[RMDB]
RNA sequence: GGGAACGACUCGAGUAGAGUCGAAAAGAUAUGGACCCAUACUUCGUUUGACGUAGGGAUCGAAGUCGGAAACGACGUAGUCUACCGAGAAGAUGGGUCCUAAGUCAAACCAGCCUUCGGGCUGGAAUCACCGGACAAUGUUCGCAUUGUCCGGUGAAAAAGAAACAACAACAACAAC
Reactivity to 2A3 in 0.01 (KOAc 150mM, MgCl2 10mM, bicine 150mM(pH8.5), 24C), signal-to-noise 1, nucleotides 027 to 126: g010a010u010a020u130g000g000a000c000c000c030a040u130a300c030u000u020c010g110u080u300u300g090a040c060g010u010a040g100g070g030a040u250c190g110a300a040g000u000c010g000g000a020a020a000c010g000a000c010g000u030a040g150u020c010u010a030c000c040g050a030g000a070a000g020a010u000g000g000g020u000c000c000u000a000a000g000u010c010a000a090a020c050c000a000g000c020c020u060u100c290g160g010g000c000u010g000g010a000a120
Reactivity to DMS in 0.01 (KOAc 150mM, MgCl2 10mM, bicine 150mM(pH8.5), 24C), signal-to-noise 1, nucleotides 027 to 126: g000a110u000a160u010g000g000a000c010c020c030a000u000a130c020u000u000c000g000u000u020u000g000a300c300g000u000a020g000g020g010a130u010c140g000a090a270g000u010c000g010g010a030a050a010c000g010a030c010g000u010a100g010u000c000u000a040c020c000g000a010g010a000a010g000a060u000g000g000g000u000c000c000u000a010a040g000u000c040a110a220a140c000c000a010g000c010c000u000u000c230g010g000g000c000u030g020g000a030a040